[RMDB]
RNA sequence: GGGAACGACUCGAGUAGAGUCGAAAAAUUGAUACCACUGAGGCCGCCAGGUUUCUGAAUGUCGAUCCGACUACUCCUAAUUGGAAUAAACCACUUUAUCAAAAACUAGAACAAAUUAUCGGCGGUAAAUUAUGCUCCCAUUCGUGGGAGCAUAAUUAAAAGAAACAACAACAACAAC
Reactivity to DMS in 0.01 (KOAc 150mM, MgCl2 10mM, bicine 150mM(pH8.5), 24C), signal-to-noise 3, nucleotides 027 to 126: a100u040u020g010a060u010a160c030c010a090c090u020g010a120g010g010c020c020g010c020c020a190g020g000u030u000u030c060u000g000a070a050u000g000u000c030g000a040u000c100c050g000a050c040u000a050c100u000c010c010u030a110a080u020u000g000g010a070a040u010a040a080a090c070c040a040c180u000u020u000a070u010c070a070a040a050a050a100c160u000a040g020a040a090c100a030a050a050u070u020a040u010c060g000g010c000g010g000u020a020
Reactivity to 2A3 in 0.01 (KOAc 150mM, MgCl2 10mM, bicine 150mM(pH8.5), 24C), signal-to-noise 3, nucleotides 027 to 126: a000u110u110g040a010u020a150c000c000a030c080u050g050a060g140g020c000c000g000c000c000a050g020g020u000u080u030c050u060g080a090a030u060g010u050c050g010a100u090c050c090g020a000c070u080a010c050u090c030c010u110a200a150u140u200g030g050a030a110u150a090a120a060c030c010a060c040u110u110u050a120u150c080a040a090a020a040a000c010u040a060g050a060a140c130a060a170a040u150u080a040u210c000g010g000c000g000g060u050a000
Chemical mapping of a 177-nucleotide RNA with DMS and 2A3. It was measured as part of the RMDB library OK1LIB. The reactions ran in a buffer of 150 mM KOAc, 10 mM MgCl2 and 150 mM bicine (pH 8.5), at 24 C. The DMS profile rests on 3,459 reads. For 2A3, 1,686 sequencing reads were counted. DMS adducts were read by reverse transcription with MarathonRT. 2A3 adducts were read by reverse transcription with SuperScript II with manganese.